[RMDB]
RNA sequence: GGGAACGACUCGAGUAGAGUCGAAAAACUUCCCUACGCUGUGGGACAUGCAUCCGUAGACCAUUUCUCUGCUGUAAAUGCUGCUAUGAUCAUGUUAUAGCAACUCCACAUAAGAUGGUUUUGUCUGACUGAUAGCAAACUUCGGUUUGCUAUCAGUAAAAGAAACAACAACAACAAC
Reactivity to 2A3 in 0.01 (KOAc 150mM, MgCl2 10mM, bicine 150mM(pH8.5), 24C), signal-to-noise 2, nucleotides 027 to 126: a000c030u060u060c020c000c000u040a080c070g000c020u000g040u080g040g020g040a000c000a020u020g010c050a010u020c030c060g010u030a020g080a140c010c010a010u030u050u030c060u050c070u150g130c020u040g090u110a000a060a050u060g000c050u040g020c000u040a020u020g020a030u010c020a040u160g080u080u090a060u050a030g000c000a000a090c020u000c030c000a040c000a080u150a020a050g080a080u060g030g080u010u000u030u120g100u030c040u040g010
Reactivity to DMS in 0.01 (KOAc 150mM, MgCl2 10mM, bicine 150mM(pH8.5), 24C), signal-to-noise 2, nucleotides 027 to 126: a120c300u000u000c010c000c010u000a060c180g010c120u000g010u000g010g010g010a050c060a070u010g020c140a040u000c080c140g010u000a040g000a120c150c060a050u000u010u000c030u000c190u020g000c080u020g020u000a070a050a040u000g000c070u010g020c020u000a000u000g000a050u010c120a080u010g000u000u000a050u000a040g010c050a010a050c030u000c010c060a040c060a100u010a060a060g010a080u000g010g000u000u000u000u020g010u000c070u000g000

Structure probing data (2A3 and DMS) for a 177-nucleotide construct. DMS adducts were read by reverse transcription with MarathonRT. Source: RMDB library 15KREP, as collected in RNAgym. The 2A3 profile rests on 1,060 reads. The reactions ran in a buffer of 150 mM KOAc, 10 mM MgCl2 and 150 mM bicine (pH 8.5), at 24 C.